[RMDB]
RNA sequence: GGGAACGACUCGAGUAGAGUCGAAAAAGUUAGGAAGCGUAGCGUUUUCAGCGUGCAUCCUUUGUCUCUAUGCAACUGAAACUGUUCGAUAGGCAGAGACGAAGCGGUCUAAAAAAAGCUCGUUCAGAUCGUUCGUGGCCUGAAAGUGGACGCGCCGGUAGUGUUUAACUUUCGAGUUAAACACUACAAAAGAAACAACAACAACAAC
Reactivity to 2A3 in 0.01 (KOAc 150mM, MgCl2 10mM, bicine 150mM(pH8.5), 24C), signal-to-noise 2, nucleotides 027 to 156: a020g080u110u100a060g020g030a150a060g020c020g000u090a030g040c010g020u010u010u000u010c030a020g000c050g150u080g040c010a040u030c020c000u000u040u030g030u020c010u000c010u040a130u140g030c020a000a120c050u040g040a060a060a110c060u150g090u090u060c040g020a050u050a050g050g020c020a010g000a010g010a040c010g000a010a000g070c010g000g030u000c030u070a030a040a070a030a000a010a080g110c110u100c100g050u110u030c040a030g010a060u020c020g030u040u060c040g020u030g040g020c010c010u000g010a040a030a010g030u050g020g020a030c030g010c010g040c000c050g050
Reactivity to DMS in 0.01 (KOAc 150mM, MgCl2 10mM, bicine 150mM(pH8.5), 24C), signal-to-noise 2, nucleotides 027 to 156: a100g020u000u000a100g040g000a080a090g030c030g030u000a070g010c030g040u000u000u000u000c030a050g020c040g010u000g030c000a030u010c030c000u000u010u000g020u000c030u000c030u010a160u020g010c000a280a080c010u010g020a120a060a180c200u000g000u000u000c010g000a200u000a070g020g010c000a100g000a150g000a050c010g010a030a040g010c020g000g020u000c020u000a000a000a050a060a040a080a120g040c100u000c110g000u010u000c050a020g000a020u000c010g010u000u000c100g050u000g020g030c020c000u000g000a010a030a090g000u020g030g000a100c030g010c020g000c030c020g000